RNA sequence: GGGAACGACUCGAGUAGAGUCGAAAAGAAGUGCGGCCUAUUCCGGGCACAAGGACGUUCAUCAGGCCACGACCGGUGAUGUUCGUCCGAUUACACUUGACGGGUCCAAACUGACGUCUUGUGGAGAGGGUAGGAGCACGUUCGCGUGUUCCUACCCAAAAGAAACAACAACAACAAC
Reactivity to DMS in 0.01 (KOAc 150mM, MgCl2 10mM, bicine 150mM(pH8.5), 24C), signal-to-noise 4, nucleotides 027 to 126: g020a060a090g020u000g020c120g000g000c030c040u010a120u010u000c050c040g000g000g020c040a040c090a200a120g030g010a020c010g020u000u000c010a020u010c010a130g020g020c020c070a090c240g000a130c070c020g010g020u040g020a010u010g000u010u000c010g000u000c010c020g000a050u010u030a110c010a020c000u000u010g020a030c010g000g000g000u020c110c100a040a080a100c140u020g000a130c020g020u010c010u000u000g000u010g000g020a110g000a240
Reactivity to 2A3 in 0.01 (KOAc 150mM, MgCl2 10mM, bicine 150mM(pH8.5), 24C), signal-to-noise 6, nucleotides 027 to 126: g130a090a020g070u130g110c070g050g020c020c000u010a040u060u020c020c010g010g010g000c010a000c010a020a040g020g000a000c000g010u000u000c000a000u010c010a010g090g030c050c090a100c110g120a160c050c050g030g090u120g010a010u000g010u000u000c000g000u000c000c000g000a000u000u060a010c010a000c010u020u030g010a000c000g030g000g140u110c090c080a150a100a020c080u150g070a020c010g000u010c000u010u030g000u020g030g030a110g020a070
Chemical mapping of a 177-nucleotide RNA with DMS and 2A3.
Conditions: 150 mM KOAc, 10 mM MgCl2 and 150 mM bicine (pH 8.5), 24 C.
It was measured as part of the RMDB library OK1LIB.
For DMS, 9,799 sequencing reads were counted.